[RMDB]
RNA sequence: GGGAACGACUCGAGUAGAGUCGAAAAGUUGCAUGCAUAUGCAUAGUGUUAUGGUACGCGCCGUAUGCAGCUAGCCAGCAUUGAUCAGUGUCGUGCGCACAUAACGUAUGUCGAUAUGCUAUGAUGUUAGCACUGUGGCCACAAUGCCAAUACACGCGUUCCGCGAUGGAUUCGUCCAUCGCGGAACAAAAGAAACAACAACAACAAC
Reactivity to 2A3 in 0.01 (KOAc 150mM, MgCl2 10mM, bicine 150mM(pH8.5), 24C), signal-to-noise 2, nucleotides 027 to 156: g070u040u000g000c010a000u000g020c000a000u050a000u020g130c050a040u020a010g160u060g030u130u040a030u020g050g100u120a090c100g000c000g010c020c000g000u010a000u060g030c040a020g040c000u030a010g170c060c070a010g000c010a040u000u220g070a090u270c090a050g000u010g080u160c020g140u240g130c000g000c000a000c020a050u020a000a000c000g050u000a020u000g040u070c130g160a000u030a000u000g000c010u010a030u110g020a010u090g060u160u060a050g010c000a000c180u070g040u000g130g000c060c020a220c000a160a120u190g050c020c000a050a060u060a000c020a000c140g120c000